An RNA of 177 nucleotides, treated with 2A3 and DMS and read out base by base. DMS (dimethyl sulfate) methylates the pairing face of unpaired adenines and cytosines. DMS adducts were read by reverse transcription with MarathonRT. Source: RMDB library OK2TST, as collected in RNAgym. The reactions ran in a buffer of 150 mM KOAc, 10 mM MgCl2 and 150 mM bicine (pH 8.5), at 24 C.
RNA sequence: GGGAACGACUCGAGUAGAGUCGAAAAGCCAGCUGCUGGUGCAGCUCCUGCAAAGAAACCAGUCGGUUGUACAGCUCCUGUUGCGUUUCCGCCGAACGGGUUUGCAUACUUCGCCUCCUCACUGAAAAUUAAAUUUAAUGUUCGCAUUAAAUUUAAUAAAAGAAACAACAACAACAAC
Reactivity to 2A3 in 0.01 (KOAc 150mM, MgCl2 10mM, bicine 150mM(pH8.5), 24C), signal-to-noise 1, nucleotides 027 to 126: g080c040c010a020g020c000u060g000c000u070g020g120u180g050c020a010g000c020u050c010c020u000g000c020a000a110a150g110a080a230a050c010c000a010g100u080c030g000g040u080u040g020u070a050c020a060g000c020u050c000c020u170g070u100u090g020c030g020u010u130u020c030c020g000c020c000g030a080a050c020g040g010g000u010u040u090g010c030a020u060a150c030u040u060c020g020c000c000u000c000c000u010c000a030c010u010g050a020a080a080
Reactivity to DMS in 0.01 (KOAc 150mM, MgCl2 10mM, bicine 150mM(pH8.5), 24C), signal-to-noise 5, nucleotides 027 to 126: g010c100c080a070g020c040u000g010c010u000g020g020u010g020c040a040g010c040u000c060c040u010g020c070a070a110a110g010a090a100a070c040c020a090g010u010c070g010g010u010u010g020u000a060c110a120g010c030u000c060c050u000g020u010u010g010c040g010u000u010u000c040c040g000c060c040g000a090a060c080g010g010g010u000u000u000g020c050a090u000a070c080u000u000c040g000c020c010u000c010c000u000c050a080c090u000g000a060a050a070